[RMDB]
RNA sequence: GGGAACGACUCGAGUAGAGUCGAAAAAUGGAGUCACACUCGACAUAGAUUGCGUGAUUGAUUUUGGGCUCAAGGUUGUAGCAGUUCUCGAUACGGAUAAUCGAUGUGUUCGCUACAACAAGCAAUCCUUUCCAGUUUCGUUCGCGAAACUGGAAAGAAAAGAAACAACAACAACAAC
Reactivity to DMS in 0.01 (KOAc 150mM, MgCl2 10mM, bicine 150mM(pH8.5), 24C), signal-to-noise 2, nucleotides 027 to 126: a130u060g000g010a010g040u010c080a050c160a060c040u000c020g040a090c090a090u020a120g000a040u000u000g040c060g000u000g000a080u000u000g010a040u020u030u020u070g010g020g030c090u000c100a030a120g060g000u000u000g000u000a040g000c000a130g000u000u000c000u000c010g040a020u020a110c220g040g030a230u090a050a000u040c000g030a070u130g020u010g000u010u010c010g000c020u000a020c000a000a010c040a060a000g000c040a020a010u000c010
Reactivity to 2A3 in 0.01 (KOAc 150mM, MgCl2 10mM, bicine 150mM(pH8.5), 24C), signal-to-noise 4, nucleotides 027 to 126: a000u170g130g010a020g010u050c040a120c000a000c250u000c010g020a020c020a000u020a030g030a040u010u030g000c010g020u020g070a260u040u010g050a060u020u060u070u290g110g020g000c010u050c100a070a060g100g000u000u000g000u000a010g000c040a030g010u050u000c010u000c000g000a000u060a050c120g170g070a070u190a120a020u060c000g020a110u170g050u030g030u070u020c060g000c010u000a010c010a000a000c000a000a000g000c000a020a040u060c000
The data come from the RNA Mapping Database (RMDB), library OK1LIB. This 177-nucleotide RNA was probed chemically with DMS and 2A3. The reactions ran in a buffer of 150 mM KOAc, 10 mM MgCl2 and 150 mM bicine (pH 8.5), at 24 C. The DMS profile rests on 2,234 reads.